[RMDB]
Overview: The record gives the reactivity of an RNA of 177 nucleotides to DMS and 2A3. 2A3 adducts were read by reverse transcription with SuperScript II with manganese. The RNA was probed in 150 mM KOAc, 10 mM MgCl2 and 150 mM bicine (pH 8.5) at 24 C. For DMS, 1,362 sequencing reads were counted.
RNA sequence: GGGAACGACUCGAGUAGAGUCGAAAAGAUAUGGAUAAGUCUGAGGCAAGGUUGACUAUCGGAAACGAUAGCAACUGAUGACCCUCAGAGCUUAUCCUAAGUCAAAAGUUGCGCUUCGGCGCAACAAUCAUGACAAGCACUUCGGUGCUUGUCAUGAAAAAGAAACAACAACAACAAC
Reactivity to DMS in 0.01 (KOAc 150mM, MgCl2 10mM, bicine 150mM(pH8.5), 24C), signal-to-noise 2, nucleotides 027 to 126: g000a020u030a300u000g000g010a000u000a000a010g000u000c000u000g010a000g020g000c040a120a110g010g000u000u000g000a180c000u000a000u010c000g010g000a100a150a140c000g020a020u000a010g010c000a030a010c000u000g000a030u000g010a050c300c000c000u010c010a020g000a050g010c000u010u000a010u010c000c000u010a030a080g010u070c040a160a100a110a110g000u010u000g010c000g000c020u010u020c240g080g020c010g040c000a000a000c000a060a090
Reactivity to 2A3 in 0.01 (KOAc 150mM, MgCl2 10mM, bicine 150mM(pH8.5), 24C), signal-to-noise 1, nucleotides 027 to 126: g040a000u080a010u170g000g000a020u010a020a000g030u000c000u020g010a000g020g000c070a030a260g030g020u020u050g120a300c000u020a000u000c010g000g000a090a050a030c010g000a010u000a000g000c000a000a000c000u000g040a080u150g010a020c020c050c020u000c000a000g000a040g000c000u000u000a000u050c000c000u000a050a010g050u000c050a000a040a090a170g000u000u010g000c010g000c030u030u100c300g150g010c000g000c020a020a000c000a000a020